[RMDB]
RNA sequence: GGGAACGACUCGAGUAGAGUCGAAAAGAUAUGGAGAGGUACACUCCAACAGCCUCAAUCGGAAACGAUUGAGGACAUGGAGGGUACACUCUCCUAAGUCAAAAGAAUCCCUCUUCGGAGGGAUUCAGCUAUGUUUUAGGUUCGCCUAAAACAUAGCAAAAGAAACAACAACAACAAC
Reactivity to DMS in 0.01 (KOAc 150mM, MgCl2 10mM, bicine 150mM(pH8.5), 24C), signal-to-noise 5, nucleotides 027 to 126: g000a060u000a300u020g000g000a010g010a020g010g010u000a010c010a030c000u000c000c010a040a090c300a240g000c010c000u000c010a000a000u000c000g000g000a160a110a240c000g010a010u000u000g020a020g010g000a010c050a090u000g000g010a010g000g000g000u010a010c010a070c000u000c000u000c000c000u010a010a110g010u010c050a110a080a180a140g000a020a010u000c000c000c000u000c000u000u010c250g010g000a020g010g000g000a010u000u000c010a060
Reactivity to 2A3 in 0.01 (KOAc 150mM, MgCl2 10mM, bicine 150mM(pH8.5), 24C), signal-to-noise 3, nucleotides 027 to 126: g020a010u060a030u210g000g000a010g000a010g020g000u010a000c020a010c010u000c010c010a030a070c100a080g090c000c010u010c010a000a000u000c000g030g030a090a060a040c010g000a000u020u010g010a010g010g010a010c010a010u040g010g000a000g000g000g000u000a000c010a060c000u000c000u000c000c000u000a010a000g000u000c030a000a010a020a200g000a000a000u010c000c060c010u020c010u050u070c300g200g000a000g020g000g010a000u000u000c000a000